[RMDB]
RNA sequence: GGGAACGACUCGAGUAGAGUCGAAAAGCACAAGACUUCGAACAUUAUAGCAGUUAGUAGUUGCCUAAACCCAUUGCAAUAUAUGGGACAGUAGAGGUCGCACGCCUAUACUGUGCGGUGAACAUUCAAAAGGGAUGGUACUUCGGUACCAUCCCAAUCUAGAAAGCUAGUUCGCUAGCUUUCUAGAAAAAGAAACAACAACAACAAC
Reactivity to 2A3 in 0.01 (KOAc 150mM, MgCl2 10mM, bicine 150mM(pH8.5), 24C), signal-to-noise 1, nucleotides 027 to 156: g030c020a030c030a060a060g080a130c040u090u080c130g090a060a010c040a080u130u170a080u100a120g050c010a000g030u010u090a000g040u010a000g000u070u090g040c040c000u090a100a080a060c010c000c000a000u000u090g010c000a000a010u000a000u000a010u250g020g000g010a000c000a000g060u030a030g030a010g010g010u050c050g050c050a010c040g050c000c000u030a030u010a030c010u030g010u000g080c010g020g030u120g100a070a020c060a060u130u190c060a140a000a070a000g010g000g000a000u030g000g000u000a000c000u010u030c160g030g000u010a000c010c000a000u000c010c000c000a000a000
Reactivity to DMS in 0.01 (KOAc 150mM, MgCl2 10mM, bicine 150mM(pH8.5), 24C), signal-to-noise 3, nucleotides 027 to 156: g000c030a120c030a060a130g010a110c040u000u020c020g010a120a160c090a090u000u000a100u010a080g000c030a090g010u010u000a070g030u000a130g010u000u010g010c000c030u010a080a100a180c010c000c000a030u010u000g000c080a150a140u000a080u000a010u000g000g000g010a080c030a050g000u000a060g000a030g010g020u000c050g030c180a080c130g000c030c030u000a050u000a050c050u000g010u000g000c100g020g030u000g000a070a100c080a140u030u010c080a030a070a100a150g010g020g050a050u000g000g010u000a010c000u010u000c300g040g000u000a000c000c000a000u010c000c010c010a000a010